[RMDB]
Notes: This 177-nucleotide RNA was probed chemically with DMS and 2A3. Reactivities are given for positions 27 through 126. For 2A3, 6,195 sequencing reads were counted. The reactions ran in a buffer of 150 mM KOAc, 10 mM MgCl2 and 150 mM bicine (pH 8.5), at 24 C. 2A3 adducts were read by reverse transcription with SuperScript II with manganese.
RNA sequence: GGGAACGACUCGAGUAGAGUCGAAAACGUCUCAGCCCGUGUUCAACCUGCGCCGCUCGAUCCGCACCGACGCCGAAGGCCGCUACAGCUUCCGCAGCGUGCUGCCCGUCGGCUACAGCGUGCCGCACCAUUAAAUCCACUUCGGUGGAUUUAAUGGAAAAGAAACAACAACAACAAC
Reactivity to DMS in 0.01 (KOAc 150mM, MgCl2 10mM, bicine 150mM(pH8.5), 24C), signal-to-noise 5, nucleotides 027 to 126: c130g000u000c020u010c030a230g010c030c010c020g010u010g010u000u010c090a100a130c050c030u000g010c060g010c040c030g000c040u010c060g020a060u000c060c080g000c080a120c040c020g010a090c100g020c060c040g010a200a200g000g020c030c040g010c020u010a050c070a130g000c080u010u010c140c140g010c090a060g010c010g010u000g000c030u010g010c120c040c040g000u000c020g010g000c020u010a110c120a080g000c050g010u010g020c020c040g010c090a240
Reactivity to 2A3 in 0.01 (KOAc 150mM, MgCl2 10mM, bicine 150mM(pH8.5), 24C), signal-to-noise 4, nucleotides 027 to 126: c030g060u010c000u000c030a020g030c010c000c010g060u050g060u090u110c070a080a060c030c010u030g010c030g010c010c030g030c020u050c040g080a120u050c040c030g030c040a030c030c000g040a030c040g030c030c020g050a030a030g010g000c000c020g000c030u100a060c030a080g000c010u140u050c080c130g040c050a010g000c000g040u060g000c000u010g000c030c010c020g160u060c000g020g010c020u000a020c040a030g010c020g050u050g030c020c020g020c020a030